[RMDB]
RNA sequence: GGGAACGACUCGAGUAGAGUCGAAAAGCAACGGCUCUGGCUGAUGCUGUCGAGCUACGCCCGGCUGGAUUUCGGCGAGAGCUUCUACCGCGACGCGCGGGUCAUCGACCUGAUCGCCGAGAAGCUACGCUGGAGGAUCAUUCGUGAUCCUCCAGCGAAAAGAAACAACAACAACAAC
Reactivity to DMS in 0.01 (KOAc 150mM, MgCl2 10mM, bicine 150mM(pH8.5), 24C), signal-to-noise 1, nucleotides 027 to 126: g010c110a110a110c070g010g010c000u000c070u010g040g000c020u000g030a060u000g000c010u000g010u010c060g000a040g020c000u000a090c180g000c000c050c080g000g010c040u000g000g010a120u000u030u000c000g000g020c000g000a140g010a020g000c020u000u000c020u000a110c150c060g000c000g010a100c150g010c130g000c040g000g010g000u010c020a100u000c260g000a020c050c020u000g000a190u010c000g000c020c030g020a020g000a010a080g010c050u000a090
Reactivity to 2A3 in 0.01 (KOAc 150mM, MgCl2 10mM, bicine 150mM(pH8.5), 24C), signal-to-noise 1, nucleotides 027 to 126: g010c000a050a080c040g030g010c000u000c020u090g120g000c000u050g080a060u190g130c020u040g110u050c100g070a070g030c040u070a070c180g050c010c030c000g050g000c000u020g010g080a190u020u200u070c030g010g000c040g060a140g000a000g130c050u000u020c000u090a140c010c000g030c060g030a120c040g060c010g000c040g040g010g040u010c030a230u150c150g010a020c020c020u040g010a120u040c000g000c010c000g020a010g000a020a000g040c010u030a040